[RMDB]
RNA sequence: GGGAACGACUCGAGUAGAGUCGAAAACUAGUGCCAUUCGUGGCACUAGAAGGGGUCCAGCCUGGAAAGGCUGGAGGUAUUGGAAUGCUCGGGCCGCCAUUCAAGGUACGCUAUUCGUAGCGUACAAUGUACUUUGAUGCUUCGGCAUCAAAGUACAAAAAGAAACAACAACAACAAC
Reactivity to 2A3 in 0.01 (KOAc 150mM, MgCl2 10mM, bicine 150mM(pH8.5), 24C), signal-to-noise 2, nucleotides 027 to 126: c000u000a010g010u000g000c000c010a020u050u050c250g050u080g000g020c020a000c000u000a000g000a020a020g040g020g010g030u000c000c000a000g000c020c000u050g110g100a220a080a010g010g000c010u010g010g030a000g050g010u070a100u050u150g080g050a110a040u030g020c000u020c010g010g000g000c000c000g000c010c010a020u120u130c090a100a030g170g020u010a000c000g000c000u010a040u040u100c200g090u030a000g000c000g010u000a000c000a000a030
Reactivity to DMS in 0.01 (KOAc 150mM, MgCl2 10mM, bicine 150mM(pH8.5), 24C), signal-to-noise 1, nucleotides 027 to 126: c000u000a010g040u000g000c020c000a040u020u010c130g000u000g010g000c000a000c000u000a000g000a150a100g000g000g010g020u020c000c000a020g000c010c010u010g000g040a130a110a040g010g010c000u010g000g000a010g000g020u000a090u000u000g000g020a060a100u000g000c030u000c020g020g000g010c010c030g010c040c050a110u000u000c130a070a190g000g010u000a000c000g030c010u000a050u000u000c220g010u000a020g020c010g010u000a000c000a060a040

An RNA of 177 nucleotides, treated with 2A3 and DMS and read out base by base. DMS adducts were read by reverse transcription with MarathonRT. For DMS, 1,313 sequencing reads were counted.